The record gives the reactivity of an RNA of 177 nucleotides to 2A3 and DMS. High DMS reactivity at an A or C suggests that its Watson-Crick edge is free. For 2A3, 134,609 sequencing reads were counted. DMS adducts were read by reverse transcription with MarathonRT. Conditions: 150 mM KOAc, 10 mM MgCl2 and 150 mM bicine (pH 8.5), 24 C.

[RMDB]
RNA sequence: GGGAACGACUCGAGUAGAGUCGAAAAGAGCUUGAUGCUAGAUUGUUCUAAUUGGACAUUAGAACAACUACUUUACCUUGGUAGAGUAGUAUGACUAUGUUCAAUAAGUCGUAAAUCUAGCAUCAUAGAUAGUAUAGUUAUUCGUGACUGUGCUAUCAAAAGAAACAACAACAACAAC
Reactivity to 2A3 in 0.01 (KOAc 150mM, MgCl2 10mM, bicine 150mM(pH8.5), 24C), signal-to-noise 9, nucleotides 027 to 126: g060a010g020c040u030u020g000a000u000g000c000u000a000g000a000u010u030g080u150u050c010u030a050a020u000u000g000g000a000c000a010u100u150a030g020a090a040c000a000a000c000u000a000c000u000u000u000a010c010c020u090u300g190g000u000a000g000a000g000u000a000g000u010a150u020g000a000c000u000a000u000g000u000u000c000a000a000u020a030a010g010u050c030g070u070a020a010a010u000c000u000a000g000c000a000u000c000a000u000a000
Reactivity to DMS in 0.01 (KOAc 150mM, MgCl2 10mM, bicine 150mM(pH8.5), 24C), signal-to-noise 9, nucleotides 027 to 126: g000a120g020c100u010u000g010a010u000g010c000u000a000g000a010u000u000g000u020u000c010u000a080a040u000u000g010g010a020c000a010u010u030a000g010a050a070c050a030a040c000u000a000c000u000u000u000a000c000c040u050u040g020g010u000a000g000a000g010u000a000g000u000a050u010g000a250c000u000a020u000g000u000u000c020a000a020u000a060a030g000u010c160g010u030a080a020a010u000c000u000a000g010c000a000u000c000a010u010a050